[RMDB]
RNA sequence: GGGAACGACUCGAGUAGAGUCGAAAACCAACUGGCUGAAGGAGUUGCAGUGUGUCUGCCUAUCUACACUUGCUGUGCAGAAUAACCUCCAACCUGUACAGCAGGCACAGACAGGCAGAUAGACGUCAAUCAUGUUUACCUUCGGGUAAACAUGAUUAAAAGAAACAACAACAACAAC
Reactivity to 2A3 in 0.01 (KOAc 150mM, MgCl2 10mM, bicine 150mM(pH8.5), 24C), signal-to-noise 2, nucleotides 027 to 126: c000c000a030a050c060u100g120g010c020u120g080a100a100g110g070a080g020u110u100g050c110a080g040u040g010u020g010u090c000u000g000c010c000u000a010u040c000u010a020c010a000c040u010u010g000c000u000g000u000g010c000a000g030a130a090u140a210a110c000c040u150c010c030a050a090c000c000u000g000u040a020c000a000g000c000a000g000g000c070a000c010a020g060a020c010a000g000g000c000a000g000a000u010a010g000a000c000g000u070c020
Reactivity to DMS in 0.01 (KOAc 150mM, MgCl2 10mM, bicine 150mM(pH8.5), 24C), signal-to-noise 4, nucleotides 027 to 126: c020c020a130a150c170u040g010g010c020u030g000a050a110g000g020a180g000u000u010g000c040a070g010u020g000u000g020u000c010u010g000c010c000u000a130u000c000u000a120c230a190c030u000u000g020c010u000g010u000g020c000a030g000a100a140u010a080a180c040c050u000c070c060a100a130c160c010u000g030u000a010c000a000g000c000a010g000g000c100a300c250a010g000a020c030a010g000g000c020a000g000a000u000a010g020a050c050g020u000c120

About this RNA
The data come from the RNA Mapping Database (RMDB), libraries RFM100 and RFMREP. The record gives the reactivity of an RNA of 177 nucleotides to 2A3 and DMS. For 2A3 the reverse transcriptase was SuperScript II with manganese. The RNA was probed in 150 mM KOAc, 10 mM MgCl2 and 150 mM bicine (pH 8.5) at 24 C. For 2A3, 1,094 sequencing reads were counted.